[RMDB]
RNA sequence: GGGAACGACUCGAGUAGAGUCGAAAAGGUUCGGAACUUCGGUUCCGAACCAAAAACCGUAGGCUCAUACAGGGAGCGGACCACUUCGAAAGAGGUGGUCGCGUUGAUCUGUAUAAGAGCCUAAACGGAAAAAUACUGAACGUUCGCGUUCAGUAAAACUAACAUACGUAUUCGUACGUAUGUUAGUAAAAGAAACAACAACAACAAC
Reactivity to 2A3 in 0.01 (KOAc 150mM, MgCl2 10mM, bicine 150mM(pH8.5), 24C), signal-to-noise 4, nucleotides 027 to 156: g000g010u000u000c000g000g040a010a000c000u130u170c300g020g010u010u020c010c000g010a000a000c000c000a020a030a000a020a010c000c000g000u000a000g000g000c000u000c010a010u000a010c000a000g010g010g020a010g010c010g010g020a030c000c000a000c000u010u010c010g100a130a080a070g010a000g010g010u010g010g000u000c000g010c000g010u010u010g070a190u000c000u000g060u000a010u010a100a130g000a000g000c000c000u000a010a000a000c000g010g050a120a080a020a000a020u080a020c000u000g000a010a010c010g020u070u090c300g020c010g080u000u000c030a000g010u020a020a010a010
Reactivity to DMS in 0.01 (KOAc 150mM, MgCl2 10mM, bicine 150mM(pH8.5), 24C), signal-to-noise 3, nucleotides 027 to 156: g020g030u010u000c010g040g000a020a010c000u000u010c300g080g010u000u000c030c040g030a000a010c000c000a010a000a030a060a060c030c020g030u000a030g020g010c010u000c000a140u000a000c000a030g020g010g000a080g040c000g020g020a040c000c010a010c000u000u010c010g020a130a180a280g000a030g000g020u000g010g020u000c000g000c000g020u010u010g000a090u020c000u000g000u010a000u010a080a100g030a040g010c010c000u000a000a010a040c000g020g020a020a090a120a120a150u000a030c010u000g000a010a020c010g000u000u010c300g020c040g020u010u000c000a010g010u000a010a040a120